Chemical mapping of a 177-nucleotide RNA with DMS and 2A3. It was measured as part of the RMDB library OK1LIB.
[RMDB]
RNA sequence: GGGAACGACUCGAGUAGAGUCGAAAACAAAGGGUGACGGCAUCACCGUGACGUUUGAUCUCUUCGAAGCGAUUACACGAGCCUACUCCUUUAUCCUCGAUCAGCCGGUACUUGAUCUAUCCGAUCAAUGACUACGGACCUUCGGGUCCGUAGUCAUAAAAGAAACAACAACAACAAC
Reactivity to DMS in 0.01 (KOAc 150mM, MgCl2 10mM, bicine 150mM(pH8.5), 24C), signal-to-noise 1, nucleotides 027 to 126: c060a020a020a000g000g000g000u000g050a080c100g020g020c130a180u010c000a090c130c010g000u000g000a200c080g030u000u000u000g060a090u000c040u000c000u000u000c140g030a010a090g010c050g030a110u010u000a150c090a100c060g000a120g000c000c000u000a180c160u030c000c040u000u000u000a080u000c000c050u000c120g000a040u040c040a070g000c000c000g130g050u040a100c050u070u000g050a070u000c000u000a070u000c280c190g070a030u010c000a060
Reactivity to 2A3 in 0.01 (KOAc 150mM, MgCl2 10mM, bicine 150mM(pH8.5), 24C), signal-to-noise 2, nucleotides 027 to 126: c050a060a000a000g030g030g030u060g050a010c010g060g000c040a110u160c050a070c100c010g000u020g020a010c000g010u000u010u110g150a200u060c060u030c000u210u230c110g000a010a020g050c010g050a080u020u220a030c060a020c020g000a010g050c000c000u000a030c050u060c010c000u030u110u050a100u100c010c000u000c020g000a040u040c010a040g020c010c000g040g020u050a040c030u100u120g040a020u030c010u010a170u090c110c000g010a000u080c020a130
For 2A3, 1,229 sequencing reads were counted.